Chemical mapping of a 177-nucleotide RNA with DMS and 2A3. For 2A3, 3,487 sequencing reads were counted. The data come from the RNA Mapping Database (RMDB), library VIROID. High DMS reactivity at an A or C suggests that its Watson-Crick edge is free.
[RMDB]
RNA sequence: GGGAACGACUCGAGUAGAGUCGAAAAGAGGCUUAUCCCGGGGGUGACGCCUCGGUCCUCCCUUAGCAUCGGAGUCCCGGGCCCCCUCCCAGGAAUAGGAACAGGGGGAGAUCGACCGGGACCCGCAGUAUGACAUUAGGUUCGCCUAAUGUCAUACAAAAGAAACAACAACAACAAC
Reactivity to DMS in 0.01 (KOAc 150mM, MgCl2 10mM, bicine 150mM(pH8.5), 24C), signal-to-noise 3, nucleotides 027 to 126: g000a030g000g000c100u010u010a120u010c040c010c070g030g010g020g020g020u000g010a110c300g010c010c000u000c000g010g000u000c070c050u000c000c010c010u000u000a100g000c150a110u010c030g010g000a140g000u000c010c010c030g020g000g010c010c000c000c000c010u000c070c010c010a050g020g020a130a120u000a060g000g000a100a080c260a060g000g000g010g000g010a110g000a070u000c150g010a110c010c010g000g000g020a020c000c000c010g000c220a090
Reactivity to 2A3 in 0.01 (KOAc 150mM, MgCl2 10mM, bicine 150mM(pH8.5), 24C), signal-to-noise 3, nucleotides 027 to 126: g010a020g010g000c060u180u150a060u130c040c050c110g060g080g040g020g040u030g010a010c050g020c010c010u010c010g000g010u030c010c020u050c010c000c000u080u180a070g060c040a130u150c030g030g000a160g050u030c000c000c020g050g000g000c000c010c010c000c000u010c010c010c000a090g060g140a210a200u210a270g030g000a100a030c040a130g040g030g000g090g000a010g020a040u130c080g080a060c030c000g000g000g000a000c010c000c000g020c000a010